This 177-nucleotide RNA was probed chemically with 2A3 and DMS. The 2A3 profile rests on 2,053 reads. The DMS profile rests on 1,838 reads. The RNA was probed in 150 mM KOAc, 10 mM MgCl2 and 150 mM bicine (pH 8.5) at 24 C.
RNA sequence: GGGAACGACUCGAGUAGAGUCGAAAAGGGCGUUGCUGGGCUGUCGAUCAAUGUCCGGGACAGUACCGUGCGCGACUCACUGAUGACCCUGACAACGCUGUACCCACCGGUCGCAGCGGUGGUCAGCAGCCCAUACGAUCUUCGGAUCGUAUGGGCUAAAAGAAACAACAACAACAAC
Reactivity to 2A3 in 0.01 (KOAc 150mM, MgCl2 10mM, bicine 150mM(pH8.5), 24C), signal-to-noise 3, nucleotides 027 to 126: g000g000g030c020g000u030u040g000c000u000g020g020g010c030u010g010u030c010g120a120u090c100a240a100u160g130u070c120c030g000g060g000a000c000a000g040u120a300c020c040g000u040g020c010g000c000g200a300c010u020c010a070c070u080g010a060u070g100a070c000c000c000u000g010a020c040a100a020c040g000c020u010g040u100a060c050c030c010a040c010c070g050g040u210c120g040c090a060g040c030g000g000u030g030g000u030c010a010g000c000
Reactivity to DMS in 0.01 (KOAc 150mM, MgCl2 10mM, bicine 150mM(pH8.5), 24C), signal-to-noise 2, nucleotides 027 to 126: g000g000g000c010g000u000u000g060c020u000g000g010g010c000u000g040u020c020g060a090u000c140a100a120u000g010u000c070c150g000g020g010a010c040a010g000u000a090c020c040g000u000g010c020g010c010g020a130c020u000c020a120c160u010g040a110u000g010a160c000c000c020u010g000a070c070a070a090c010g010c030u000g000u000a110c210c000c080a170c170c070g020g010u010c120g010c040a110g010c020g020g010u000g020g000u000c020a000g000c060